[RMDB]
The data come from the RNA Mapping Database (RMDB), library OK2TRN. The record gives the reactivity of an RNA of 177 nucleotides to 2A3 and DMS. 2A3 adducts were read by reverse transcription with SuperScript II with manganese.
RNA sequence: GGGAACGACUCGAGUAGAGUCGAAAACAUACUACUUUGAGGUUACGUUUUAACGUAGACUCAUUGUUCAUGCCUAAUGGAGGGACUGACAGUGGAAUUUUCCGUAUAGUCUGCUUCAGAGUAUUGCGAUCCAACUCGGAUUCGUCCGAGUUGGAUCAAAAGAAACAACAACAACAAC
Reactivity to 2A3 in 0.01 (KOAc 150mM, MgCl2 10mM, bicine 150mM(pH8.5), 24C), signal-to-noise 1, nucleotides 027 to 126: c030a020u160a100c010u000a000c010u030u010u000g000a000g020g000u030u020a010c000g000u050u000u060u210a210a000c000g000u010a010g020a050c000u000c040a000u020u030g070u070u010c020a020u020g070c010c020u100a070a040u070g020g030a030g060g000g000a010c000u000g000a000c000a140g120u150g090g050a090a120u120u120u300u000c010c000g030u050a060u100a130g010u010c010u130g240c000u070u000c000a000g010a010g080u050a080u080u080g110c030
Reactivity to DMS in 0.01 (KOAc 150mM, MgCl2 10mM, bicine 150mM(pH8.5), 24C), signal-to-noise 1, nucleotides 027 to 126: c070a060u000a120c080u000a100c010u000u000u000g010a000g000g020u000u000a000c010g010u000u000u000u000a130a050c010g000u000a000g000a020c000u000c000a010u000u010g000u010u000c120a080u000g000c010c030u010a160a190u000g000g000a020g010g000g000a010c000u000g030a070c180a160g020u010g000g020a060a280u000u000u000u000c000c020g030u010a110u000a020g000u000c000u000g000c000u000u010c000a030g000a080g010u000a020u000u000g100c290
The reactions ran in a buffer of 150 mM KOAc, 10 mM MgCl2 and 150 mM bicine (pH 8.5), at 24 C.
For DMS the reverse transcriptase was MarathonRT.